[RMDB]
RNA sequence: GGGAACGACUCGAGUAGAGUCGAAAACUCGCCCUCGGAGACAAGGCAGCCACCGGCACGGCGCGGUCGGCGGGCCGGUUUGGCACGGCGGCGUCGGGCGGGCUGCACGCAGUGCUGGGCCUGACGGUGCCCACAUAACUUUCGAGUUAUGUGGGCAAAAAGAAACAACAACAACAAC
Reactivity to DMS in 0.01 (KOAc 150mM, MgCl2 10mM, bicine 150mM(pH8.5), 24C), signal-to-noise 7, nucleotides 027 to 126: c040u000c060g010c030c010c010u000c090g010g010a140g010a080c090a120a180g000g010c020a080g000c000c010a100c210c060g010g010c020a060c020g010g010c020g020c060g020g020u000c020g010g010c130g020g010g020c000c000g010g010u000u010u010g010g010c000a120c050g000g000c010g010g000c020g020u000c010g000g000g010c000g010g000g010c020u010g010c020a060c100g010c100a120g010u010g010c050u000g000g010g010c040c050u000g010a080c130g010g010
Reactivity to 2A3 in 0.01 (KOAc 150mM, MgCl2 10mM, bicine 150mM(pH8.5), 24C), signal-to-noise 2, nucleotides 027 to 126: c010u010c040g010c000c010c040u010c080g130g070a120g010a110c060a070a080g050g040c020a000g030c000c030a150c070c020g090g000c020a020c030g040g000c030g020c050g120g070u080c010g020g140c100g070g060g000c000c010g030g000u120u160u160g030g010c000a020c040g030g010c030g040g030c010g030u040c000g000g000g000c030g030g030g000c020u040g000c020a030c010g040c010a040g040u030g140c020u050g000g070g000c010c020u050g030a050c080g010g130